About this RNA: An RNA of 207 nucleotides, treated with DMS and 2A3 and read out base by base. The data come from the RNA Mapping Database (RMDB), library RNAMAK. The DMS profile rests on 3,567 reads. The 2A3 profile rests on 2,464 reads. DMS (dimethyl sulfate) methylates the pairing face of unpaired adenines and cytosines.
[RMDB]
RNA sequence: GGGAACGACUCGAGUAGAGUCGAAAAAGGGCUAGUAGUUCGCUACUAGCCCUCAUUUACCUUUGUGCAGAUUGCCAAUGACGCGGAGCCCAUUGGGCUCGUAAGACAGGCAUCUGCACUCUGGUCACGCGCGUGUGGAGGUUCGCCUCCACACGAAUUACCUAGAGCUAUUCGUAGCUCUAGGUAAAAAAGAAACAACAACAACAAC
Reactivity to DMS in 0.01 (KOAc 150mM, MgCl2 10mM, bicine 150mM(pH8.5), 24C), signal-to-noise 2, nucleotides 027 to 156: a020g020g000g010c010u010a000g020u000a020g050u000u000c290g080c000u000a000c000u010a020g000c000c000c000u000c000a010u000u000u010a030c000c010u000u000u000g020u000g000c000a020g020a040u000u020g080c010c030a150a210u000g000a130c170g000c090g000g040a060g000c000c000c020a300u020u030g070g040g040c010u000c010g050u000a030a190g000a190c070a130g040g040c000a050u000c000u000g020c010a010c010u000c010u010g010g000u000c100a080c100g000c060g010c000g050u010g000u000g000g000a000g020g000u000u020c300g000c000c000u000c000c000a000c000a010c010g010a010a060
Reactivity to 2A3 in 0.01 (KOAc 150mM, MgCl2 10mM, bicine 150mM(pH8.5), 24C), signal-to-noise 4, nucleotides 027 to 156: a010g010g000g000c000u010a010g020u000a000g010u070u070c270g020c150u000a000c010u000a020g000c000c000c000u000c000a000u000u010u050a030c010c000u000u010u010g010u010g000c010a020g000a070u200u130g090c010c040a170a300u130g050a050c090g020c100g300g100a060g000c000c000c080a300u300u300g000g000g000c010u020c010g000u040a050a010g070a040c050a050g000g000c000a010u010c000u000g010c000a000c010u000c000u000g000g000u070c090a070c160g180c020g010c020g020u000g000u000g020g010a020g050g000u080u130c220g120c050c000u000c000c000a000c000a000c000g000a000a000